[RMDB]
RNA sequence: GGGAACGACUCGAGUAGAGUCGAAAAGAAGCUGGAGGCAGAUUCGUCGCUUUCUCUGGAGAAGGACAGUCAUUGCGUAAAAAGGGAAGAAAGCCCUAAGUGAGGACUGUUGGCUGAUUGGAAAAUAUAUAAAUCAGGUCUUCGGACCUGAUUUAUAAAAAGAAACAACAACAACAAC
Reactivity to DMS in 0.01 (KOAc 150mM, MgCl2 10mM, bicine 150mM(pH8.5), 24C), signal-to-noise 2, nucleotides 027 to 126: g000a130a070g020c060u000g010g000a060g000g030c060a100g020a080u010u000c130g000u010c060g040c030u000u000u000c030u010c060u000g000g030a120g030a120a050g010g000a040c050a010g000u000c030a080u000u000g010c030g000u020a090a050a130a090a020g020g010g000a080a120g000a110a110a190g000c010c000c000u010a020a090g020u000g010a030g020g000a010c020u000g000u000u000g000g000c020u010g000a150u020u010g010g000a120a060a070a090u020a090